[RMDB]
The record gives the reactivity of an RNA of 177 nucleotides to DMS and 2A3. The RNA was probed in 150 mM KOAc, 10 mM MgCl2 and 150 mM bicine (pH 8.5) at 24 C. 2A3 is a SHAPE reagent: it acylates the 2'-hydroxyl of flexible nucleotides of all four kinds. The data come from the RNA Mapping Database (RMDB), library OK1LIB. The 2A3 profile rests on 2,956 reads.

RNA sequence: GGGAACGACUCGAGUAGAGUCGAAAAUGUCGUGCAGGGAAAACCGUUCGGACAGCGGCGUCGUGUCCCGUGUGGCGGGCGUGGUGAUCGGCGCGGACAGCUACCUGCCGAACAUGGGCACGGAAGACCUCAGCAUAUCGUUCGCGAUAUGCUGAGGAAAAGAAACAACAACAACAAC
Reactivity to DMS in 0.01 (KOAc 150mM, MgCl2 10mM, bicine 150mM(pH8.5), 24C), signal-to-noise 2, nucleotides 027 to 126: u010g000u000c010g000u020g020c000a000g010g010g000a050a060a050a170c050c080g010u000u000c030g000g000a100c070a130g010c020g000g010c070g000u020c000g010u020g010u070c010c000c000g000u020g000u040g040g000c020g010g000g010c100g010u010g010g030u000g000a090u010c000g010g000c070g000c040g010g000a060c060a050g010c120u000a220c030c010u000g000c010c010g000a030a010c010a030u000g020g000g000c100a000c020g000g000a120a080g000a140
Reactivity to 2A3 in 0.01 (KOAc 150mM, MgCl2 10mM, bicine 150mM(pH8.5), 24C), signal-to-noise 3, nucleotides 027 to 126: u080g030u020c020g050u110g010c030a060g000g060g000a020a020a050a090c010c020g010u020u030c040g030g060a110c050a080g000c030g050g000c010g010u030c030g000u020g060u140c000c020c040g070u210g020u100g130g100c020g000g000g030c020g060u090g020g050u050g040a270u080c030g080g040c010g020c000g020g060a000c000a000g000c000u020a040c000c000u000g010c000c020g000a000a000c010a040u060g000g020g000c050a020c040g030g040a090a030g050a100